[RMDB]
RNA sequence: GGGAACGACUCGAGUAGAGUCGAAAAUGCUGCUAACAACAUCGGCUUGAUCGUCUCUGGUGCGCUCAACAUCCUUGGUGCCGGUGCACCGGCCACAGCCGCUGUCACGGUCAGCAAGCAGCGCAAGGACGGCACGCUCACCGGUUCUCCGGUGGAGCAGUGCACGCCCGUUCGCGGGCGUGCACUGAAAAGAAACAACAACAACAAC
Reactivity to 2A3 in 0.01 (KOAc 150mM, MgCl2 10mM, bicine 150mM(pH8.5), 24C), signal-to-noise 3, nucleotides 027 to 156: u100g000c010u020g000c020u060a080a070c050a050a020c020a060u040c020g010g020c020u070u160g080a180u180c100g070u030c070u040c100u220g000g050u000g030c010g000c020u040c030a020a110c020a120u100c080c010u070u220g060g000u020g010c020c030g000g010u010g040c010a030c000c010g030g000c010c030a070c030a060g000c010c010g000c000u010g020u060c030a020c200g070g040u100c030a010g020c010a040a020g040c000a000g000c000g020c060a040a030g050g030a010c010g000g000c040a000c040g050c010u030c010a010c000c000g050g000u230u100c200u030c060c000g020g000u000g020g020a010g020
Reactivity to DMS in 0.01 (KOAc 150mM, MgCl2 10mM, bicine 150mM(pH8.5), 24C), signal-to-noise 2, nucleotides 027 to 156: u000g000c020u000g040c020u000a130a140c040a060a010c040a070u000c010g010g050c000u010u000g000a120u000c040g010u020c060u000c010u000g060g040u000g000c020g010c060u020c030a090a040c020a010u000c070c080u020u010g060g060u010g030c040c220g020g000u000g010c000a010c060c010g010g030c050c050a110c110a130g000c010c000g080c060u000g040u010c100a100c100g020g000u010c040a140g050c010a090a100g010c010a080g000c030g000c030a140a090g000g010a040c030g030g010c000a030c030g000c010u000c030a050c000c010g020g000u000u000c290u000c010c000g000g040u000g000g000a070g040

This 207-nucleotide RNA was probed chemically with 2A3 and DMS. It was measured as part of the RMDB library OK3TST. For DMS, 3,253 sequencing reads were counted. 2A3 adducts were read by reverse transcription with SuperScript II with manganese.